[RMDB]
RNA sequence: GGGAACGACUCGAGUAGAGUCGAAAAUGGGGAGGUGCAUGGAGCCAUUGAUCCAAGGAUUUCCGAAUGGGACUUCCUGUUUAACACUCCGAAAGGAGAGGGAACCCCGGGAAUUGAAACAUCUUAGUCUAAGAAUCCGAUUCGUCGGAUUCUUAGAAAAAGAAACAACAACAACAAC
Reactivity to 2A3 in 0.01 (KOAc 150mM, MgCl2 10mM, bicine 150mM(pH8.5), 24C), signal-to-noise 2, nucleotides 027 to 126: u080g010g030g020g000a030g030g000u090g040c100a080u120g030g030a040g010c030c010a040u040u040g020a020u000c010c030a040a010g110g000a000u070u000u000c000c000g040a130a120u120g030g000g000a040c070u010u020c000c000u000g000u040u120u060a160a060c110a030c010u000c000c000g020a050a030a040g000g000a020g010a090g000g000g000a020a040c030c000c010c000g000g000g000a020a020u070u080g030a080a070a030c070a140u060c020u000u090a050g040
Reactivity to DMS in 0.01 (KOAc 150mM, MgCl2 10mM, bicine 150mM(pH8.5), 24C), signal-to-noise 4, nucleotides 027 to 126: u010g010g010g000g010a120g000g010u020g040c040a100u020g010g000a190g020c030c050a060u010u010g000a150u010c060c030a040a070g000g000a040u010u020u010c010c020g000a120a120u020g000g000g000a070c160u000u010c000c010u000g010u040u040u030a080a150c300a190c030u000c010c010g000a100a120a230g000g000a020g000a100g000g000g010a040a070c040c020c000c030g010g010g010a030a120u010u040g000a100a140a110c110a070u000c010u000u010a040g000